[RMDB]
RNA sequence: GGGAACGACUCGAGUAGAGUCGAAAAGUCGGUUCGACAGCGGCUUUGGGGGCGGGUUCGGCGGUUUCGGGGUCGGUGGAGACGGCGCCGAGUUCAACCUCAACGACUUGUUCGACGCCGCCAGCCGCAGAGCAUUCUGCUUCGGCAGAAUGCUCUGAAAAGAAACAACAACAACAAC
Reactivity to 2A3 in 0.01 (KOAc 150mM, MgCl2 10mM, bicine 150mM(pH8.5), 24C), signal-to-noise 3, nucleotides 027 to 126: g020u030c020g020g120u130u080c040g010a020c030a090g060c020g040g030c020u110u060u120g000g000g010g000g020c020g010g030g000u080u060c030g000g000c040g020g010u040u110u070c110g030g090g010g040u050c010g050g010u120g090g080a130g000a030c040g030g100c000g000c030c010g020a010g010u020u070c020a000a070c020c000u020c010a030a010c010g060a040c040u080u160g060u190u100c020g010a040c050g000c000c000g030c010c000a010g010c020c010g030
Reactivity to DMS in 0.01 (KOAc 150mM, MgCl2 10mM, bicine 150mM(pH8.5), 24C), signal-to-noise 1, nucleotides 027 to 126: g000u000c000g000g040u000u030c060g000a070c090a060g040c020g020g020c090u020u020u020g000g000g000g000g000c170g000g020g010u000u000c080g020g020c080g000g000u000u050u020c250g000g000g000g000u000c000g000g000u020g000g000a100g000a040c050g000g000c000g000c050c020g000a000g000u000u000c140a060a190c060c000u000c020a090a150c130g000a060c080u000u020g000u040u010c070g020a090c020g000c000c010g000c050c020a070g000c000c030g000